[RMDB]
RNA sequence: GGGAACGACUCGAGUAGAGUCGAAAAUUUUAGUACAAGCGAGUACACGCAGUAUACUGCCACUUGUGUGAGAAUACUUUUAGUACAAGCGAGUACACGCAGUAUACUGCCACUUGUGUGAGAAUACGAGACAGUGCUGAUUCGUCAGCACUGUCUCAAAAGAAACAACAACAACAAC
Reactivity to DMS in 0.01 (KOAc 150mM, MgCl2 10mM, bicine 150mM(pH8.5), 24C), signal-to-noise 1, nucleotides 027 to 126: u000u070u000u000a300g020u000a020c000a010a020g000c080g000a000g000u000a000c130a190c300g040c110a100g000u000a000u000a050c000u000g000c000c270a120c000u000u000g050u010g000u000g000a020g000a200a170u000a000c050u000u010u000u140a110g000u000a060c010a140a300g000c060g000a120g000u110a160c140a190c300g000c000a000g000u000a000u000a000c070u000g000c000c270a000c000u000u040g050u000g060u040g000a180g000a010a040u000a020c230
Reactivity to 2A3 in 0.01 (KOAc 150mM, MgCl2 10mM, bicine 150mM(pH8.5), 24C), signal-to-noise 2, nucleotides 027 to 126: u130u090u070u090a020g020u020a000c000a090a050g040c000g090a000g130u170a090c050a000c150g050c010a030g000u000a000u000a000c000u000g000c010c030a000c000u030u010g030u000g010u150g170a110g190a300a060u080a070c100u050u040u030u250a020g030u040a000c010a020a000g000c010g000a020g060u200a060c050a000c030g000c000a000g000u010a000u000a000c000u000g000c000c000a000c000u000u000g000u000g000u010g010a070g020a090a070u160a050c080
An RNA of 177 nucleotides, treated with DMS and 2A3 and read out base by base. High DMS reactivity at an A or C suggests that its Watson-Crick edge is free. For DMS the reverse transcriptase was MarathonRT. The RNA was probed in 150 mM KOAc, 10 mM MgCl2 and 150 mM bicine (pH 8.5) at 24 C.